[RMDB]
This 207-nucleotide RNA was probed chemically with DMS and 2A3.
The DMS profile rests on 2,425 reads.
2A3 adducts were read by reverse transcription with SuperScript II with manganese.
For DMS the reverse transcriptase was MarathonRT.
The reactions ran in a buffer of 150 mM KOAc, 10 mM MgCl2 and 150 mM bicine (pH 8.5), at 24 C.

RNA sequence: GGGAACGACUCGAGUAGAGUCGAAAAAGUCACCUAUUACGAUAGGUGACAUUUGAACCAGCGAACAAUGCAGUUGCGAGAUUCGAGGUUUCAGUCUGAAUCAUAGUAGCCAUUACGAUGGCUACAACUCACUCCCGACUGUUCGCAGUCGGGAGAACUUAUGAGGAAGCUUCGGCUUCCUCAUAAGAAAAGAAACAACAACAACAAC
Reactivity to DMS in 0.01 (KOAc 150mM, MgCl2 10mM, bicine 150mM(pH8.5), 24C), signal-to-noise 1, nucleotides 027 to 156: a130g000u010c000a020c000c010u000a030u010u010a140c210g020a060u000a040g010g000u000g020a000c020a010u010u000u000g020a110a290c050c050a180g000c060g010a060a120c090a160a150u020g010c040a210g020u000u000g000c000g000a190g000a070u000u000c010g020a160g010g010u000u000u000c080a130g010u010c060u000g000a050a090u000c050a060u010a080g000u000a010g000c020c000a040u010u000a120c220g030a090u000g010g020c000u000a000c000a000a030c060u020c040a160c000u000c000c000c000g000a010c000u000g030u000u010c240g060c040a020g030u000c000g000g000g000a000g000a000a040
Reactivity to 2A3 in 0.01 (KOAc 150mM, MgCl2 10mM, bicine 150mM(pH8.5), 24C), signal-to-noise 3, nucleotides 027 to 156: a000g010u000c000a000c000c000u000a020u060u060a090c240g050a020u000a000g010g000u000g010a000c000a000u030u040u160g020a030a030c010c000a060g130c010g020a000a000c020a120a140u300g070c020a020g010u030u050g000c010g020a030g010a030u020u010c010g040a010g040g020u070u090u200c030a010g060u040c010u030g080a090a040u190c110a080u080a190g010u000a000g000c000c000a000u070u060a100c280g090a030u020g000g010c000u010a000c000a020a010c020u100c030a110c000u000c000c000c000g000a000c000u030g030u090u110c200g000c100a000g010u020c000g000g010g000a000g010a000a000